[RMDB]
Structure probing data (DMS) for a 177-nucleotide construct. The DMS profile rests on 1,659 reads. For DMS the reverse transcriptase was MarathonRT. The data come from the RNA Mapping Database (RMDB), library TTRINS.

RNA sequence: GGGAACGACUCGAGUAGAGUCGAAAAGAUAUGGAUGCUCCAAUCCUUCCAUUACUCGAUAAGACGUGGUCGGAAACGACCAUACGUCUUUUGACGAGUAAAUGGAAGGAUUGGAGCAUCCUAAGUCCAACACAGCAUUCUUCGGAAUGCUGUGUUGAAAAGAAACAACAACAACAAC
Reactivity to DMS in 0.01 (KOAc 150mM, MgCl2 10mM, bicine 150mM(pH8.5), 24C), signal-to-noise 1, nucleotides 027 to 126: g000a140u010a300u010g000g000a020u000g010c010u000c000c000a040a030u000c010c000u010u020c000c000a050u000u000a000c000u000c000g000a180u000a030a000g010a020c000g040u000g010g020u030c000g020g010a160a100a270c000g010a020c000c010a070u000a010c040g010u000c000u000u000u000u010g010a140c130g000a050g000u000a020a020a020u000g000g010a000a000g000g040a000u000u000g000g000a000g010c000a020u000c000c000u000a030a070g000u010c050